[RMDB]
RNA sequence: GGGAACGACUCGAGUAGAGUCGAAAAGGAAUCUGGAAACUGAACAGAAUGAUAACAUCUGGGAAGAUGCAGGAAUUCCUAAUCGGGAACACACUGAGCAUAAACCUGUAUGACAUAGCAGACUGGGCACAGGAGAAUACUUCGGUAUUCUCCUGUGAAAAGAAACAACAACAACAAC
Reactivity to 2A3 in 0.01 (KOAc 150mM, MgCl2 10mM, bicine 150mM(pH8.5), 24C), signal-to-noise 5, nucleotides 027 to 126: g030g000a040a020u070c010u030g020g100a100a120a070c010u010g030a040a010c030a010g100a090a130u140g100a120u120a280a030c040a050u000c000u010g010g000g030a040a040g030a030u120g020c000a000g020g050a050a040u010u010c010c000u020a010a120u120c050g030g010g020a060a010c040a000c030a000c080u040g040a020g000c030a030u050a050a070a120c000c000u030g020u070a100u140g040a050c030a060u080a020g030c030a000g030a100c020u010g040g000g000
Reactivity to DMS in 0.01 (KOAc 150mM, MgCl2 10mM, bicine 150mM(pH8.5), 24C), signal-to-noise 6, nucleotides 027 to 126: g010g000a070a010u020c010u010g010g000a190a120a210c020u000g030a280a180c030a020g000a030a070u030g000a200u080a130a140c110a090u000c000u010g000g010g020a140a050g010a060u020g020c090a050g000g000a050a070u000u000c000c000u000a090a130u030c080g000g000g000a100a080c090a040c110a080c020u000g010a060g010c040a020u010a040a050a110c070c020u010g010u020a050u020g010a060c080a060u000a050g000c040a110g000a090c040u000g000g000g000

This 177-nucleotide RNA was probed chemically with 2A3 and DMS.
For 2A3, 4,339 sequencing reads were counted.
DMS adducts were read by reverse transcription with MarathonRT.
For DMS, 9,710 sequencing reads were counted.
Conditions: 150 mM KOAc, 10 mM MgCl2 and 150 mM bicine (pH 8.5), 24 C.
Reactivities are rounded to 0.1 and cut off at 0 and 3.